Chemical mapping of a 177-nucleotide RNA with 2A3 and DMS. Conditions: 150 mM KOAc, 10 mM MgCl2 and 150 mM bicine (pH 8.5), 24 C. The DMS profile rests on 208,339 reads. For DMS the reverse transcriptase was MarathonRT. For 2A3, 435,247 sequencing reads were counted.
RNA sequence: GGGAACGACUCGAGUAGAGUCGAAAAGGAUGCAACGUAGUAAUAUGUGUGCCGAGUACCUCUUGAGUUACGCAUUACUAUUCAUGAUGUCACUCAAGAGGUAGGUGACGUCAUGAAAUCUGCAUCGCUACAUGAGAGUAUUCGUACUUUCAUGUAGAAAAGAAACAACAACAACAAC
Reactivity to 2A3 in 0.01 (KOAc 150mM, MgCl2 10mM, bicine 150mM(pH8.5), 24C), signal-to-noise 9, nucleotides 027 to 126: g030g000a000u000g000c000a020a030c080g040u030a020g010u010a030a050u050a040u080g030u000g020u020g000c000c000g010a000g060u050a050c010c020u050c000u020u010g030a050g040u030u070a000c000g000c000a010u020u040a060c040u110a070u070u090c010a010u020g050a070u040g010u000c000a000c000u050c020a030a030g050a030g060g010u010a000g000g000u010g050a010c000g010u030c030a010u010g010a020a010a010u040c030u020g000c000a000u000c000g000
Reactivity to DMS in 0.01 (KOAc 150mM, MgCl2 10mM, bicine 150mM(pH8.5), 24C), signal-to-noise 9, nucleotides 027 to 126: g000g000a010u000g010c010a040a080c280g010u000a050g010u000a060a050u000a050u000g020u000g020u000g010c000c020g000a000g020u010a080c110c080u000c000u000u000g000a080g010u000u000a050c180g010c010a020u000u000a050c150u000a100u000u010c130a060u000g000a020u000g010u000c070a020c000u000c040a060a050g000a040g010g010u000a010g000g010u000g000a020c010g010u000c060a010u000g000a040a090a090u010c100u000g010c000a010u000c010g000